This 207-nucleotide RNA was probed chemically with DMS and 2A3. As a SHAPE reagent, 2A3 marks flexible, mostly unpaired nucleotides at the ribose 2'-OH.
[RMDB]
RNA sequence: GGGAACGACUCGAGUAGAGUCGAAAACUAAAAAUUGCGAUACAAAUCGCGAUUAUGUCCAUACUUAUCACCUCCUUAGGUUGAUAACAACAUUAUACACGAAAGGAGCAUAAACAAUAUGCAAGCAUUAAAAACAAAAUCGAACAUCGGCGAAAUAACUACCUUUUAAUUUCGAUUAAAAGGUAGUAAAAGAAACAACAACAACAAC
Reactivity to DMS in 0.01 (KOAc 150mM, MgCl2 10mM, bicine 150mM(pH8.5), 24C), signal-to-noise 3, nucleotides 027 to 156: c040u020a070a100a080a050a080u000u030g000c010g010a070u000a120c280a090a150a120u000c010g020c000g000a040u000u000a080u010g000u000c030c020a110u000a110c120u020u000a030u010c020a050c040c020u000c110c130u000u010a060g010g040u000u010g020a030u000a010a050c030a050a080c010a300u000u000a080u010a110c080a070c050g000a120a070a110g000g000a130g060c020a040u000a070a080a130c080a060a100u000a080u000g010c070a080a060g020c010a070u000u000a070a060a090a050a230c060a080a040a100a140u000c070g000a030a080c040a050u000c060g010g050c000g020a060a070a090u010a100
Reactivity to 2A3 in 0.01 (KOAc 150mM, MgCl2 10mM, bicine 150mM(pH8.5), 24C), signal-to-noise 6, nucleotides 027 to 156: c030u100a070a060a010a050a030u020u020g000c010g010a010u040a180c120a080a300a040u010c000g000c000g010a010u040u040a050u120g040u000c040c020a040u060a160c040u050u020a020u040c010a010c030c010u100c010c050u060u110a020g020g000u060u120g020a020u040a050a020c020a020a000c010a020u080u110a070u170a140c080a000c080g120a120a050a020g060g020a040g020c020a020u080a060a150a020c040a100a090u030a000u120g020c030a020a050g010c010a040u080u190a140a080a040a000a020c050a030a110a030a060u080c030g020a030a050c040a080u050c020g080g000c040g070a110a060a000u110a070
Source: RMDB library OK3TST, as collected in RNAgym.